[RMDB]
The record gives the reactivity of an RNA of 177 nucleotides to DMS and 2A3. For 2A3 the reverse transcriptase was SuperScript II with manganese.
RNA sequence: GGGAACGACUCGAGUAGAGUCGAAAAGAAAAGCGCGGAAUAAAAGUGGACUGAUAUUCUAGCACUGAAUAGUCCACGAUAGUGCUAGUAGUACGAAAGUACGAAAAGUUUCGCGCGAAAAAUAAAAGGGAAACAUAUACUUCGGUAUAUGUUUCCCAAAAGAAACAACAACAACAAC
Reactivity to DMS in 0.01 (KOAc 150mM, MgCl2 10mM, bicine 150mM(pH8.5), 24C), signal-to-noise 2, nucleotides 027 to 126: g020a180a070a140a290g010c010g010c010g000g010a020a010u010a040a070a170a200g030u000g000g000a010c020u010g000a140u010a090u000u000c000u010a060g030c010a020c000u000g000a140a020u000a080g000u000c000c040a000c000g030a040u030a020g000u000g000c010u000a010g000u020a230g010u000a000c020g000a120a110a090g010u000a000c000g000a120a050a090a240g000u000u010u000c000g010c020g000c000g000a000a120a070a080a010u030a050a120a050a150
Reactivity to 2A3 in 0.01 (KOAc 150mM, MgCl2 10mM, bicine 150mM(pH8.5), 24C), signal-to-noise 2, nucleotides 027 to 126: g000a000a150a050a050g000c000g000c000g000g020a000a100u110a150a040a020a010g010u000g010g000a010c010u050g100a200u050a080u150u020c010u020a010g000c010a020c070u020g030a160a030u050a180g010u040c000c000a000c000g010a010u100a010g020u030g000c000u030a000g020u000a020g000u000a000c000g020a160a050a000g010u010a030c000g000a060a030a000a030g010u000u000u000c010g000c000g000c010g020a010a060a000a000a020u210a010a050a030a060
DMS adducts were read by reverse transcription with MarathonRT.